[RMDB]
RNA sequence: GGGAACGACUCGAGUAGAGUCGAAAAAUGAGAUCCCAUCUUGCACACUGUGGUAAUUUGAGAUUCUCAUGCCUCCUACUUGGAGAGAUCUGGACUAGAAGUCAGGGCAUCUGACUCUGCCAGCCACAAAACGUACAAGGCUUCGGCCUUGUACGAAGGGUAUAUCACUGUUCGCAGUGAUAUACCCAAAAGAAACAACAACAACAAC
Reactivity to DMS in 0.01 (KOAc 150mM, MgCl2 10mM, bicine 150mM(pH8.5), 24C), signal-to-noise 2, nucleotides 027 to 156: a070u000g010a020g000a040u000c000c000c010a020u000c050u000u000g050c020a070c040a200c190u020g020u000g030g070u000a020a050u000u010u000g000a020g020a060u000u000c000u010c020a000u000g010c060c000u000c030c010u000a080c230u000u010g010g000a060g010a140g010a120u000c030u020g030g030a100c090u000a080g010a070a090g000u000c000a020g020g020g050c290a120u010c010u010g020a040c000u000c050u010g010c000c000a030g010c000c030a150c080a080a070a110a210c030g010u000a020c010a000a030g010g010c000u020u000c300g050g020c000c000u010u010g030u000a000c010g030a020a050
Reactivity to 2A3 in 0.01 (KOAc 150mM, MgCl2 10mM, bicine 150mM(pH8.5), 24C), signal-to-noise 4, nucleotides 027 to 156: a000u040g000a010g000a000u000c000c010c000a010u000c010u000u010g000c010a030c040a110c220u290g240u300g110g020u030a020a010u020u010u020g020a020g000a030u280u060c000u000c000a000u030g030c010c010u010c000c000u120a250c080u110u260g030g000a060g000a000g020a100u020c000u010g010g010a070c040u080a090g010a100a030g080u000c000a010g030g040g150c080a160u100c120u000g000a000c000u010c000u000g010c000c000a020g020c010c000a100c020a020a100a050a030c010g000u000a000c000a000a000g010g000c000u020u080c130g090g000c000c000u000u000g000u000a000c000g000a000a000